[RMDB]
RNA sequence: GGGAACGACUCGAGUAGAGUCGAAAACUCCACUGGGUGGGUCAAGGUUGAGGUAUAGAAUCCUAUUCGCUCCUGAUAGGAGAAAUUCUAUAUUGCUUAUAUAUGUGCUUACGCACAUAUAUAAAUGUCCUAGAACUGUUUUCGAACAGUUCUAGGAAAAAGAAACAACAACAACAAC
Reactivity to DMS in 0.01 (KOAc 150mM, MgCl2 10mM, bicine 150mM(pH8.5), 24C), signal-to-noise 4, nucleotides 027 to 126: c060u010c010c050a070c060u020g000g010g040u030g000g000g000u000c060a090a080g000g010u010u000g010a060g000g010u000a020u010a010g000a040a040u000c000c010u000a020u000u010c120g000c090u020c070c030u000g000a040u000a020g000g010a140g010a060a110a080u010u000c010u000a020u000a030u010u010g000c090u000u000a000u000a000u000a000u000g010u000g000c000u020u040a150c300g010c010a000c000a010u000a000u000a000u000a000a030a120u020g000
Reactivity to 2A3 in 0.01 (KOAc 150mM, MgCl2 10mM, bicine 150mM(pH8.5), 24C), signal-to-noise 1, nucleotides 027 to 126: c000u060c020c020a020c010u110g070g030g010u070g040g000g030u060c070a060a050g090g000u090u100g050a020g020g010u030a000u000a030g010a010a020u000c000c010u020a010u050u120c090g030c060u040c030c060u070g010a030u030a000g000g000a020g040a010a210a020u100u000c040u000a040u020a010u050u100g060c000u040u000a000u020a000u000a000u000g000u000g000c030u150u210a090c160g010c000a010c000a000u000a000u000a000u000a000a030a040u160g000

This 177-nucleotide RNA was probed chemically with DMS and 2A3. The reactions ran in a buffer of 150 mM KOAc, 10 mM MgCl2 and 150 mM bicine (pH 8.5), at 24 C. Source: RMDB libraries RFM100 and RFMREP, as collected in RNAgym. For 2A3, 693 sequencing reads were counted. For DMS the reverse transcriptase was MarathonRT.